[RMDB]
RNA sequence: GGGAACGACUCGAGUAGAGUCGAAAACAAACACAAACCCCGCCUGUUUACCAAAAACAUCACCUCUAGCAUAACCAGUAUUAGAGGCACUGCCUGCCCGGUGACUAAUAGUUAAACGGCCGCGGUAACACGUCUUGAAGUUCGCUUCAAGACGUGUAAAAGAAACAACAACAACAAC
Reactivity to DMS in 0.01 (KOAc 150mM, MgCl2 10mM, bicine 150mM(pH8.5), 24C), signal-to-noise 2, nucleotides 027 to 126: c070a080a080a060c090a030c180a030a150a180c070c040c010c040g000c110c030u000g000u000u040u010a100c090c060a040a050a050a060a090c100a100u030c030a090c000c010u020c060u000a040g000c090a080u000a190a070c110c040a060g000u000a050u000u000a000g010a000g010g050c070a000c080u050g000c040c040u000g020c040c090c100g000g000u040g030a070c040u010a060a020u030a100g010u000u000a000a060a040c120g000g000c080c050g050c210g010g000u010a090
Reactivity to 2A3 in 0.01 (KOAc 150mM, MgCl2 10mM, bicine 150mM(pH8.5), 24C), signal-to-noise 4, nucleotides 027 to 126: c010a010a070a010c040a000c030a110a160a110c020c000c000c000g020c000c010u060g060u070u040u070a070c040c020a000a010a020a120a040c020a040u060c020a010c010c030u050c040u040a010g030c010a050u050a240a080c010c010a040g060u040a170u140u080a050g040a090g090g000c000a010c060u060g000c000c020u040g000c000c010c020g010g000u030g020a010c010u020a040a100u030a070g080u070u080a020a090a030c020g020g010c030c020g010c040g000g020u030a020
The record gives the reactivity of an RNA of 177 nucleotides to DMS and 2A3.
It was measured as part of the RMDB library OK1LIB.
For 2A3 the reverse transcriptase was SuperScript II with manganese.
The 2A3 profile rests on 2,847 reads.
Reactivities are given for positions 27 through 126.